[RMDB]
RNA sequence: GGGAACGACUCGAGUAGAGUCGAAAAGCGUACGCUAGUGCUAGGCUACUAGGACUAGAUAUCAUGUCGAUCGCGUGUAGUACAUACAUGGCUCGUAUCACAUGCGCACUCAGCCAUGAGCUAGGCGGACGAGACGAUUCUUCGGAAUCGUCUCGUCAAAAGAAACAACAACAACAAC
Reactivity to 2A3 in 0.01 (KOAc 150mM, MgCl2 10mM, bicine 150mM(pH8.5), 24C), signal-to-noise 2, nucleotides 027 to 126: g020c010g040u060a030c170g000c070u000a000g000u080g130c000u010a010g120g000c030u200a120c000u040a170g030g020a020c010u000a000g000a010u080a060u100c050a020u050g040u060c090g020a020u030c010g000c010g000u010g020u010a070g000u030a020c080a130u100a030c020a020u060g150g000c080u060c140g030u120a030u060c000a010c040a070u060g000c000g000c010a060c040u050c020a020g000c000c010a120u160g040a010g000c050u020a040g000g050c030g000
Reactivity to DMS in 0.01 (KOAc 150mM, MgCl2 10mM, bicine 150mM(pH8.5), 24C), signal-to-noise 2, nucleotides 027 to 126: g000c060g000u010a030c160g030c010u010a000g010u000g000c000u000a000g000g010c300u010a110c020u010a000g000g000a010c000u020a010g010a060u020a100u000c090a060u010g040u000c120g030a050u000c050g010c000g000u010g010u000a000g000u000a040c240a160u000a070c060a010u000g000g040c060u010c160g000u010a030u000c050a020c000a030u000g010c030g010c180a160c040u000c040a040g000c010c020a060u020g000a060g000c070u000a040g020g000c010g010
The data come from the RNA Mapping Database (RMDB), library OK2TRN. The record gives the reactivity of an RNA of 177 nucleotides to 2A3 and DMS. Conditions: 150 mM KOAc, 10 mM MgCl2 and 150 mM bicine (pH 8.5), 24 C. For 2A3, 2,257 sequencing reads were counted.